[RMDB]
RNA sequence: GGGAACGACUCGAGUAGAGUCGAAAACUUCCUUCUUGUUACUUAAAUUGCUGGGGGGCUCCCAACACCUGGACUUUUGGCACCACGAGGUCAACACCCUGAUUACAAAAGCCUUAGUUGACCCAAACGAAAACAUAACGUUCGCGUUAUGUUUUCGAAAAGAAACAACAACAACAAC
Reactivity to 2A3 in 0.01 (KOAc 150mM, MgCl2 10mM, bicine 150mM(pH8.5), 24C), signal-to-noise 3, nucleotides 027 to 126: c020u020u030c000c000u080u150c120u060u120g090u080u030a100c020u020u140a020a120a210u120u100g020c080u080g000g000g020g000g020g000c030u010c000c010c000a020a020c060a010c030c010u010g060g030a080c020u070u080u060u110g030g010c010a040c030c010a040c070g060a070g040g000u010c010a010a010c010a030c020c010c040u040g060a110u060u100a050c040a030a120a020a010g010c000c010u030u040a040g000u020u030g020a060c020c010c000a020a020a040
Reactivity to DMS in 0.01 (KOAc 150mM, MgCl2 10mM, bicine 150mM(pH8.5), 24C), signal-to-noise 1, nucleotides 027 to 126: c230u010u010c030c000u030u030c180u000u010g000u000u000a030c200u000u030a030a020a030u050u000g020c020u000g040g000g040g010g020g000c060u000c010c010c010a150a100c080a070c100c010u060g030g040a190c110u000u000u000u000g000g000c000a060c000c010a100c060g000a010g000g000u020c080a050a050c010a140c030c020c000u000g000a080u000u050a110c140a110a110a050a110g000c050c000u000u000a030g000u000u010g010a130c000c000c010a050a070a060
Background
The record gives the reactivity of an RNA of 177 nucleotides to 2A3 and DMS. For DMS the reverse transcriptase was MarathonRT. For 2A3, 1,624 sequencing reads were counted. The RNA was probed in 150 mM KOAc, 10 mM MgCl2 and 150 mM bicine (pH 8.5) at 24 C. 2A3 adducts were read by reverse transcription with SuperScript II with manganese.